Record summary: An RNA of 177 nucleotides, treated with 2A3 and read out base by base. 2A3 adducts were read by reverse transcription with SuperScript II with manganese. The data come from the RNA Mapping Database (RMDB), library OK1LIB. For 2A3, 352 sequencing reads were counted.
[RMDB]
RNA sequence: GGGAACGACUCGAGUAGAGUCGAAAAUUCUGUGCGAUUGCGAUGCGCAAAUAGGCGUUGGCUUCUGAAUUCACAUAUCUAGAUUUCCAUCGACAACUUGACGAGUAGAACUUCAGCAAUCAGUGCCCACCUGGUGCCACUUCGGUGGCACCAGGUGAAAAGAAACAACAACAACAAC
Reactivity to 2A3 in 0.01 (KOAc 150mM, MgCl2 10mM, bicine 150mM(pH8.5), 24C), signal-to-noise 1, nucleotides 027 to 126: u060u000c000u010g120u000g080c000g020a020u020u020g000c000g080a020u150g000c080g010c020a010a010a010u190a000g000g000c000g000u000u000g000g000c060u010u060c000u000g120a120a120u160u150c000a020c000a010u180a000u000c010u000a210g080a300u090u000u030c050c060a080u090c080g000a000c000a050a060c090u110u000g020a160c000g000a010g040u080a070g000a040a000c110u190u070c080a000g040c010a000a000u020c000a020g000u000g040c000c000
The reactions ran in a buffer of 150 mM KOAc, 10 mM MgCl2 and 150 mM bicine (pH 8.5), at 24 C.